[RMDB]
RNA sequence: GGGAACGACUCGAGUAGAGUCGAAAAUUUGCAUGAUGAUUAUUCCUUCGAGAAUUCUGCAAUUCGGACAAUCUCCUCAGUUUACUGUGGCGAGAUUGCAUGUUGACAUUUCUACACUUGAUCUGACAAUCAUUCGAAAAUUCGUUUUCGAAUGAUUAAAAGAAACAACAACAACAAC
Reactivity to 2A3 in 0.01 (KOAc 150mM, MgCl2 10mM, bicine 150mM(pH8.5), 24C), signal-to-noise 9, nucleotides 027 to 126: u050u020u050g030c030a050u220g040a030u060g020a040u140u080a060u190u080c060c000u050u130c070g140a160g030a210a040u090u030c020u020g020c010a010a050u090u110c050g070g030a040c020a000a010u000c010u020c010c000u000c000a040g030u080u150u200a200c010u020g030u090g160g020c140g010a010g000a000u000u010g020c010a020u120g030u040u070g030a060c060a080u060u100u010c050u090a050c050a040c070u040u090g040a050u090c040u060g030a030c050
Reactivity to DMS in 0.01 (KOAc 150mM, MgCl2 10mM, bicine 150mM(pH8.5), 24C), signal-to-noise 7, nucleotides 027 to 126: u010u020u000g010c030a030u000g010a050u010g010a160u030u010a100u010u000c030c030u010u030c210g000a120g010a060a050u010u000c060u000g020c000a030a050u010u010c110g010g000a170c020a010a010u000c000u000c000c010u000c010a010g010u000u010u010a080c020u000g020u030g000g020c160g010a010g010a010u000u000g000c080a070u020g010u010u000g000a090c140a110u000u010u010c020u010a070c130a080c150u010u000g000a120u000c020u000g000a290c190

Overview
An RNA of 177 nucleotides, treated with 2A3 and DMS and read out base by base. The RNA was probed in 150 mM KOAc, 10 mM MgCl2 and 150 mM bicine (pH 8.5) at 24 C. For DMS the reverse transcriptase was MarathonRT. 2A3 adducts were read by reverse transcription with SuperScript II with manganese.